[RMDB]
RNA sequence: GGGAACGACUCGAGUAGAGUCGAAAACCGUAGGUGCAAUUGUCAGAUAGGCUUUAUCAUCGAUCGUUCCUUCGAAAGAGGGAACGGGAGAUAAAUCCUAUCUUGGAUUUAUUGCACCUAAACGGAAAAGCUUCGUAGUGUUCGCACUACGAAGCAAGUUGGCGGUAUAGUUCGCUAUACCGCCAACAAAAGAAACAACAACAACAAC
Reactivity to 2A3 in 0.01 (KOAc 150mM, MgCl2 10mM, bicine 150mM(pH8.5), 24C), signal-to-noise 1, nucleotides 027 to 156: c000c000g000u020a010g000g000u000g000c010a010a000u030u010g000u010c010a010g010a020u000a000g010g010c010u050u010u020a020u000c160a080u100c060g090a040u040c000g010u000u000c040c000u020u000c030g060a140a090a090g000a000g010g000g000a000a000c000g000g020g000a030g000a000u020a000a000a000u000c000c000u020a000u020c020u030u070g010g020a010u290u170u080a030u010u020g000c000a000c000c000u000a000a000a000c020g050g030a160a090a000a030g010c000u000u000c000g000u010a020g020u020g050u050u070c220g030c170a010c000u000a000c000g000a000a000g010c000a000a030